The data come from the RNA Mapping Database (RMDB), library M2PK50. Chemical mapping of a 177-nucleotide RNA with DMS. The DMS profile rests on 922 reads.
[RMDB]
RNA sequence: GGGAACGACUCGAGUAGAGUCGAAAAAGCGGCCCUUUCGAGGGCCGCUGAUGGAAAGCCAGCCGAAAGGCAUUUUAUUCCUUGGCUGGCGAAAGCCUAAUAUUCACGCUGCUUUCGAGCAGCGUAACAUUGGUGAUUCCUUCGGGAAUCACCAAUGAAAAGAAACAACAACAACAAC
Reactivity to DMS in 0.01 (KOAc 150mM, MgCl2 10mM, bicine 150mM(pH8.5), 24C), signal-to-noise 1, nucleotides 027 to 126: a030g040c010g020g010c010c000c000u000u000u000c230g010a020g040g000g010c000c000g000c030u000g000a020u010g000g000a040a110a300g010c000c020a000g000c000c010g000a110a040a010g010g000c300a020u000u000u010u020a130u000u010c010c000u000u000g000g010c000u000g020g040c000g000a020a020a090g020c030c020u000a070a100u000a130u010u020c120a000c010g020c000u000g010c000u010u010u010c100g000a000g000c000a000g020c010g000u010a010a060
Values cover nucleotides 27 to 126. Conditions: 150 mM KOAc, 10 mM MgCl2 and 150 mM bicine (pH 8.5), 24 C.